This 207-nucleotide RNA was probed chemically with 2A3.
Reactivities are rounded to 0.1 and cut off at 0 and 3.
It was measured as part of the RMDB library OK3TST.
2A3 adducts were read by reverse transcription with SuperScript II with manganese.

[RMDB]
RNA sequence: GGGAACGACUCGAGUAGAGUCGAAAACGCCUCGCUCCACGUCCGCCGAUGUCGGCGCUGAACCGCGAUCAUGAUCUUCUGCGCGUCGCCGCUCAUGGCUCCUCCUCGAAUGAUUCGCAACCACACGCUUCACAAGUUCCGAUGUCCGAGUGAUGCGGUUCAUCCUGCUAUUCGUAGCAGGAUGAACAAAAGAAACAACAACAACAAC
Reactivity to 2A3 in 0.01 (KOAc 150mM, MgCl2 10mM, bicine 150mM(pH8.5), 24C), signal-to-noise 3, nucleotides 027 to 156: c040g060c010c010u010c010g030c020u000c000c000a080c070g040u030c040c020g020c000c010g100a040u110g080u160c010g010g000c000g000c060u090g040a060a050c030c030g030c050g020a060u150c080a160u110g130a100u050c030u100u010c030u100g020c030g000c010g080u050c060g000c030c000g030c000u100c040a080u110g000g000c010u030c000c000u040c000c010u030c020g060a050a080u160g060a110u100u070c020g020c050a030a040c040c010a040c040a030c060g050c000u050u120c050a030c050a170a050g010u180u020c030c010g060a110u150g050u020c050c000g000a010g030u000g000a060u020g020c000g010